[RMDB]
RNA sequence: GGGAACGACUCGAGUAGAGUCGAAAAUACUUAGUACGCGCGUAGUUGCAGGCAUUCCGGGUGCAGCAACUGACGCGGAAGACUUUUCCCAGAGUGUGCGCAUCAACUGGCGUGCUGAGUAGUGCACGAAUUGCACGUACGUUCGCGUACGUGCAAAAUGUAAUAUCUAAUUCGUUAGAUAUUACAUAAAAGAAACAACAACAACAAC
Reactivity to 2A3 in 0.01 (KOAc 150mM, MgCl2 10mM, bicine 150mM(pH8.5), 24C), signal-to-noise 6, nucleotides 027 to 156: u070a000c000u010u000a000g000u010a010c010g010c000g000c010g010u010a010g020u020u000g010c050a130g100g010c020a040u120u090c110c190g210g070g000u020g010c020a010g000c000a010a010c010u100g150a030c010g000c010g010g000a010a000g140a080c010u160u170u050u020c010c000c000a020g020a010g020u100g000u010g010c030g010c020a060u030c040a100a260c060u030g000g000c000g010u010g010c000u000g000a010g010u090a020g020u020g010c010a000c020g040a070a110u050u010g000c000a000c000g000u000a000c000g010u010u050c200g010c000g080u000a000c000g000u010g010c000a000a010a000
Reactivity to DMS in 0.01 (KOAc 150mM, MgCl2 10mM, bicine 150mM(pH8.5), 24C), signal-to-noise 4, nucleotides 027 to 156: u000a050c040u000u000a050g020u000a040c000g020c000g010c030g050u000a050g020u000u000g020c010a130g030g020c010a030u000u010c010c300g000g040g140u000g000c020a300g010c010a020a050c010u010g010a040c030g020c020g020g010a060a080g010a110c120u000u000u000u000c000c000c000a220g000a120g030u010g010u000g000c050g020c050a220u000c030a060a130c050u010g020g020c000g010u000g030c010u010g020a050g010u000a110g020u000g000c030a080c040g010a090a190u000u000g000c000a030c000g010u000a010c000g020u000u000c300g020c020g020u000a000c010g010u000g010c000a000a000a040